The record gives the reactivity of an RNA of 177 nucleotides to DMS and 2A3. For DMS the reverse transcriptase was MarathonRT. The RNA was probed in 150 mM KOAc, 10 mM MgCl2 and 150 mM bicine (pH 8.5) at 24 C.
[RMDB]
RNA sequence: GGGAACGACUCGAGUAGAGUCGAAAAGAGGACUCGGUUAGGCUUAGGGUCAUGACUUCCCGCCUUUUGCUGCUACUCAACAGGAGUUAUCGCGAAUUACCUGUGCUAUUGUGCACCAUUAGUGACAGGUCUCCAGUCAUUUCGAUGACUGGAGACCAAAAGAAACAACAACAACAAC
Reactivity to DMS in 0.01 (KOAc 150mM, MgCl2 10mM, bicine 150mM(pH8.5), 24C), signal-to-noise 1, nucleotides 027 to 126: g000a180g030g010a040c050u010c020g000g030u000u000a120g000g000c030u000u000a090g010g010g010u000c040a060u020g010a140c200u000u000c010c020c000g020c060c050u000u000u020u000g020c080u000g020c060u000a030c050u010c090a060a040c050a080g000g020a060g000u010u010a070u000c080g000c200g010a130a080u000u020a080c000c040u000g000u010g010c080u000a050u000u000g000u000g030c140a130c280c040a050u000u000a010g010u000g030a060c100a030
Reactivity to 2A3 in 0.01 (KOAc 150mM, MgCl2 10mM, bicine 150mM(pH8.5), 24C), signal-to-noise 2, nucleotides 027 to 126: g140a040g060g020a010c030u020c060g050g010u060u120a100g070g040c040u040u110a040g000g040g020u040c070a100u110g040a030c000u030u000c020c000c020g010c030c000u010u160u000u110g030c040u000g040c020u040a050c030u050c100a120a060c000a090g070g030a030g020u040u070a100u090c090g020c060g130a030a040u100u050a080c010c030u030g010u000g030c020u000a070u170u110g050u140g060c060a050c080c010a040u030u070a030g020u000g140a020c010a020
The DMS profile rests on 828 reads.
For 2A3 the reverse transcriptase was SuperScript II with manganese.
For 2A3, 1,174 sequencing reads were counted.